[RMDB]
RNA sequence: GGGAACGACUCGAGUAGAGUCGAAAAUAUUACAUCUUCGGAUGUAAUAACUGGUGGUGGCUGGCUUGUUGCUAGUGGCGCAACUGUUGCCAUGACUGCGGAAUCGCUCUGAAUUCGUUCAGAGCAACGGUAAGAAAGGUUUCGACCUUUCUUACCGAAAAGAAACAACAACAACAAC
Reactivity to 2A3 in 0.01 (KOAc 150mM, MgCl2 10mM, bicine 150mM(pH8.5), 24C), signal-to-noise 4, nucleotides 027 to 126: u020a000u000u000a000c000a000u020c000u040u030c220g130g010a000u010g000u000a000a000u010a020a040c070u060g050g000u020g040g010u020g030g060c070u020g020g000c030u060u150g020u050u020g070c010u050a090g140u090g210g030c060g000c030a030a050c030u090g130u230u090g020c010c000a020u070g100a050c020u030g030c030g070g110a060a090u130c100g000c010u000c000u000g020a020a010u070u070c200g050u060u000c010a000g000a000g000c000a010a020
Reactivity to DMS in 0.01 (KOAc 150mM, MgCl2 10mM, bicine 150mM(pH8.5), 24C), signal-to-noise 5, nucleotides 027 to 126: u000a010u000u000a000c000a000u000c000u010u020c250g030g000a000u000g010u000a000a000u000a020a120c080u000g010g030u000g010g030u000g000g020c020u000g020g000c060u010u000g020u000u010g030c020u000a150g030u010g010g010c120g010c040a050a060c060u000g010u010u000g010c000c020a030u020g000a090c070u000g000c090g020g010a120a100u010c120g020c000u010c000u000g010a020a020u000u010c170g010u000u000c000a010g010a020g010c010a020a030
This 177-nucleotide RNA was probed chemically with 2A3 and DMS. The data come from the RNA Mapping Database (RMDB), library M2PK50. High DMS reactivity at an A or C suggests that its Watson-Crick edge is free. Conditions: 150 mM KOAc, 10 mM MgCl2 and 150 mM bicine (pH 8.5), 24 C. For DMS the reverse transcriptase was MarathonRT.